[RMDB]
RNA sequence: GGGAACGACUCGAGUAGAGUCGAAAAACGCGGAGUACGCUCCGCGACAACACUUCUUUCGACCCGCUAACCGAGACCUAUGGGUCGUUACAUUACGUCUCUAUCUUACUCACAUAACAUCGCACAAAAAACGUGGUUCGGUUCGCCGAACCACGAAUCACAAUAUAGAGUUCGCUCUAUAUUGUGAAAAAGAAACAACAACAACAAC
Reactivity to 2A3 in 0.01 (KOAc 150mM, MgCl2 10mM, bicine 150mM(pH8.5), 24C), signal-to-noise 6, nucleotides 027 to 156: a000c010g000c000g020g000a010g020u060a030c170g040c050u000c020c000g010c010g030a000c000a040a020c030a030c060u130u100c020u060u150u040c010g000a010c010c010c020g000c120u070a060a060c070c060g040a020g020a070c040c000u070a120u220g000g010g000u010c000g020u010u030a040c010a090u080u090a030c040g030u000c010u000c000u020a090u060c050u080u090a060c030u080c090a050c020a140u190a130a050c020a120u160c090g060c110a070c120a060a070a010a060a040a030c050g000u000g000g000u000u000c000g000g060u010u050c180g030c030c000g000a000a000c000c000a000c000g000a000a000
Reactivity to DMS in 0.01 (KOAc 150mM, MgCl2 10mM, bicine 150mM(pH8.5), 24C), signal-to-noise 2, nucleotides 027 to 156: a150c050g050c000g020g000a070g010u000a090c290g020c000u010c020c000g000c040g010a080c050a070a160c090a120c060u000u000c020u000u000u000c030g030a090c040c000c030g050c090u000a080a120c050c000g000a160g020a050c030c060u020a090u010g010g040g000u000c000g020u000u000a040c050a090u000u000a050c050g010u000c030u000c020u000a110u000c020u000u000a070c050u000c070a050c040a080u000a060a090c080a070u010c060g020c060a120c130a000a040a080a020a060a130c010g030u000g010g000u000u000c000g000g040u000u000c280g020c010c000g000a000a000c000c000a010c000g000a010a060
Source information
Structure probing data (2A3 and DMS) for a 207-nucleotide construct.